[RMDB]
RNA sequence: GGGAACGACUCGAGUAGAGUCGAAAAUGAGAUGACGUGUUUGUUUCACCAGGACGAGGAUGUGGCAUCAUAUUACUAGCCAUCGCACGAAAUUAAUAGGAUGGCACGUCCUCAUCUUAGAUGGAACAGAAUUUUACCAGUUCGCUGGUAAAAUUCUAAAAGAAACAACAACAACAAC
Reactivity to DMS in 0.01 (KOAc 150mM, MgCl2 10mM, bicine 150mM(pH8.5), 24C), signal-to-noise 2, nucleotides 027 to 126: u000g000a090g030a120u010g000a080c170g000u000g000u000u000u000g010u000u000u000c010a090c000c010a080g000g000a010c060g010a020g000g010a000u000g010u000g020g000c010a010u000c000a050u010a050u000u020a010c180u010a140g030c130c120a070u010c210g000c200a190c180g030a120a100a040u040u000a020a010u000a030g000g000a000u000g000g020c000a000c010g000u000c000c010u000c000a000u000c000u000u000a090g040a110u010g000g000a030a010c030
Reactivity to 2A3 in 0.01 (KOAc 150mM, MgCl2 10mM, bicine 150mM(pH8.5), 24C), signal-to-noise 5, nucleotides 027 to 126: u270g020a080g060a050u130g030a020c070g050u060g040u050u080u070g020u000u000u000c020a030c020c000a010g010g000a010c020g000a000g000g000a000u010g010u030g020g060c000a000u000c000a010u010a000u010u040a030c100u050a020g080c040c040a190u120c100g020c050a070c110g090a060a080a040u030u010a010a010u010a000g020g000a000u000g010g110c000a000c000g000u000c000c000u000c000a010u000c000u020u030a090g020a070u050g010g010a030a010c030
Chemical mapping of a 177-nucleotide RNA with DMS and 2A3.